[RMDB]
RNA sequence: GGGAACGACUCGAGUAGAGUCGAAAACCACGACGUUCGCGUCGUGGAAAAAAGAUAUGGAUUGAACUACACGUUGGUAGGACGUUGAAAUCGGAAACGAUGGAGUCCUAUCAACGUGCAAUCCUAAGUCAAAAACGACGAGGUUCGCCUCGUCGAACCGAAUCUUAGGGUUCGCCCUAAGAUUCGGAAAAGAAACAACAACAACAAC
Reactivity to 2A3 in 0.01 (KOAc 150mM, MgCl2 10mM, bicine 150mM(pH8.5), 24C), signal-to-noise 1, nucleotides 027 to 156: c000c000a000c000g000a000c000g000u040u090c300g030c000g160u020c000g000u040g010g020a060a100a010a010a000a000g120a040u150a080u100g000g000a010u000u020g000a050a010c000u160a060c230a000c040g000u000u010g000g000u000a000g000g000a000c020g160u290u080g000a020a040a000u020c000g030g040a050a140a020c000g000a020u020g050g000a030g000u010c000c000u000a000u000c000a000a000c000g000u000g000c000a000a000u000c000c010u030a060a000g020u050c050a000a080a050a020a030c000g010a010c000g000a010g070g010u090u120c240g170c010c000u000c000g000u030c000g010a040a020